This 177-nucleotide RNA was probed chemically with 2A3 and DMS.
For 2A3 the reverse transcriptase was SuperScript II with manganese.
The reactions ran in a buffer of 150 mM KOAc, 10 mM MgCl2 and 150 mM bicine (pH 8.5), at 24 C.
[RMDB]
RNA sequence: GGGAACGACUCGAGUAGAGUCGAAAAGGGCUUUUGUGCCGUAAAGCGCCCUGGCAUUGCCUGAGGAUAGACGAGGAAGCACACGUCCCUCCCCAGCAAGACUCCGCUUUCUUUUGGGGCCUGCAGGGUCAAGAUCAUUGUUCGCAAUGAUCUUGACAAAAGAAACAACAACAACAAC
Reactivity to 2A3 in 0.01 (KOAc 150mM, MgCl2 10mM, bicine 150mM(pH8.5), 24C), signal-to-noise 2, nucleotides 027 to 126: g040g000g030c030u090u110u090u170g030u080g010c010c010g010u050a080a060a020g040c040g020c020c000c000u000g030g000c090a220u060u300g030c000c000u060g020a170g060g010a060u110a210g110a100c040g040a020g050g070a020a040g000c030a010c010a010c040g090u160c010c000c000u000c000c010c000c010a020g010c040a070a080g020a090c010u000c040c030g050c040u130u120u080c070u000u100u160u110g020g020g000g000c010c000u030g010c030a060g150g020
Reactivity to DMS in 0.01 (KOAc 150mM, MgCl2 10mM, bicine 150mM(pH8.5), 24C), signal-to-noise 2, nucleotides 027 to 126: g010g010g000c020u000u010u000u010g010u010g040c030c050g020u030a040a070a140g020c030g020c020c020c010u010g060g000c060a130u000u010g000c040c040u000g010a110g040g040a080u000a110g010a090c030g010a140g020g010a150a100g030c080a070c080a050c290g010u000c000c010c040u000c010c000c000c020a050g030c090a030a040g010a070c070u000c040c060g000c290u010u020u010c120u000u000u000u020g030g010g000g000c040c030u000g020c060a070g020g000